[RMDB]
RNA sequence: GGGAACGACUCGAGUAGAGUCGAAAACGCGUCAUGUUCGCAUGACGCGCAUUACCGAGAAAGGAGCUCCGUAUAAAACUCCAACCCUUGGAAACAAGGGAAAACCGAUAGUAUUCGUACUAUCGAAGAAUCUUUGUGAAUUCGUUCACAAAGAUUCAAAAGAAACAACAACAACAAC
Reactivity to DMS in 0.01 (KOAc 150mM, MgCl2 10mM, bicine 150mM(pH8.5), 24C), signal-to-noise 3, nucleotides 027 to 126: c010g010c000g010u010c010a020u000g000u000u030c200g020c020a000u000g010a000c000g000c010g000c020a050u010u000a200c020c000g010a100g000a110a110a130g000g010a030g000c020u000c080c140g030u000a110u000a080a030a060a050c020u000c010c020a150a200c010c010c000u010u000g000g010a170a140a130c010a020a000g000g000g020a020a030a130a120c240c020g010a000u010a010g020u000a030u000u000c120g010u000a020c000u000a000u000c000g000a100a080
Reactivity to 2A3 in 0.01 (KOAc 150mM, MgCl2 10mM, bicine 150mM(pH8.5), 24C), signal-to-noise 3, nucleotides 027 to 126: c010g000c000g000u000c000a010u010g030u040u060c170g000c130a010u000g000a000c000g000c000g000c000a000u000u080a080c000c030g020a050g050a130a200a040g030g000a010g000c040u030c110c080g150u070a090u060a200a120a030a020c010u010c010c000a040a110c000c000c000u000u000g000g000a050a040a010c010a010a000g000g000g000a040a030a000a040c040c000g010a000u000a000g000u000a020u030u060c150g010u010a000c000u000a000u020c000g010a030a040